The data come from the RNA Mapping Database (RMDB), library 15KLIB. Structure probing data (DMS and 2A3) for a 170-nucleotide construct. 2A3 is a SHAPE reagent: it acylates the 2'-hydroxyl of flexible nucleotides of all four kinds. 2A3 adducts were read by reverse transcription with SuperScript II with manganese. The reactions ran in a buffer of 150 mM KOAc, 10 mM MgCl2 and 150 mM bicine (pH 8.5), at 24 C.

RNA sequence: GGGAACGACUCGAGUAGAGUCGAAAAUUGAAGGUAAAACAGCCUGUGGGUGAAACACACCCACAGGGCCCAUGGGGCGCUAGCACUCUGGUAUCACGGUACCUUAGUGCGCCUGUUUUACCGAAGGGUACGCUAAAGUUCGCUUUAGCGAAAAGAAACAACAACAACAAC
Reactivity to DMS in 0.01 (KOAc 150mM, MgCl2 10mM, bicine 150mM(pH8.5), 24C), signal-to-noise 9, nucleotides 027 to 129: u040u040g000a160a130g010g010u000a000a000a000a000c010a030g030c020c000u010g020u010g000g000g000u020g020a110a170a090c250a190c020a000c030c000c000a000c010a020g020g020g020c000c000c000a030u040g050g010g000g010c040g030c040u070a070g040c000a010c010u010c020u000g000g000u020a010u010c040a100c280g050g000u020a010c000c000u000u020a000g020u000g020c010g010c010c000u000g020u000u000u000u000a000c010c020g010a030a050g010g010g030u020a110
Reactivity to 2A3 in 0.01 (KOAc 150mM, MgCl2 10mM, bicine 150mM(pH8.5), 24C), signal-to-noise 9, nucleotides 027 to 129: u120u110g050a080a020g000g000u000a000a000a000a000c000a000g000c000c000u000g000u000g000g010g000u010g040a070a090a010c110a020c000a000c050c000c000a000c000a000g000g000g000c000c000c010a060u190g130g030g000g000c010g000c070u120a050g000c000a000c000u000c000u000g000g000u000a000u020c030a020c220g140g000u000a000c000c000u000u000a000g000u010g000c000g000c000c000u000g010u000u000u000u000a000c000c000g000a000a000g020g010g030u070a020